[RMDB]
The record gives the reactivity of an RNA of 177 nucleotides to 2A3 and DMS.
For 2A3 the reverse transcriptase was SuperScript II with manganese.
For DMS the reverse transcriptase was MarathonRT.
RNA sequence: GGGAACGACUCGAGUAGAGUCGAAAAUAGUCGGAAUUCGUUCCGACUAGAUGAACGCAGCAAGCGGCAGCGCGCUCAAAAGAGCACGCAAAAGCAACGCAAAAAUGAACUUAUUCGUAAGUUCAAACAGAAGUCUUAUAUUCGUAUAAGACUUCUGAAAAGAAACAACAACAACAAC
Reactivity to 2A3 in 0.01 (KOAc 150mM, MgCl2 10mM, bicine 150mM(pH8.5), 24C), signal-to-noise 3, nucleotides 027 to 126: u020a000g000u000c000g010g020a010a010u050u030c160g040u100u000c000c000g000a000c000u000a000g000a010u120g050a080a010c100g010c120a060g040c040a200a070g010c030g040g000c040a020g000c010g010c000g010c000u000c010a300a300a080a080g000a000g000c020a010c020g000c010a030a030a000a040g010c010a020a060c060g000c030a010a100a040a000a040u070g000a000a000c000u010u010a010u060u080c130g060u030a010a010g000u010u010c000a030a000a000
Reactivity to DMS in 0.01 (KOAc 150mM, MgCl2 10mM, bicine 150mM(pH8.5), 24C), signal-to-noise 4, nucleotides 027 to 126: u000a000g010u000c000g020g010a010a040u000u020c170g020u000u000c010c000g000a010c000u000a000g010a110u010g010a130a130c150g020c100a080g000c080a110a300g010c010g000g030c270a170g010c000g030c040g000c000u000c010a060a070a100a080g010a000g030c000a010c000g020c000a030a030a240a120g000c020a070a060c170g000c060a030a050a080a070a150u010g000a010a010c000u000u000a030u000u010c130g030u000a010a020g000u000u000c000a060a080a170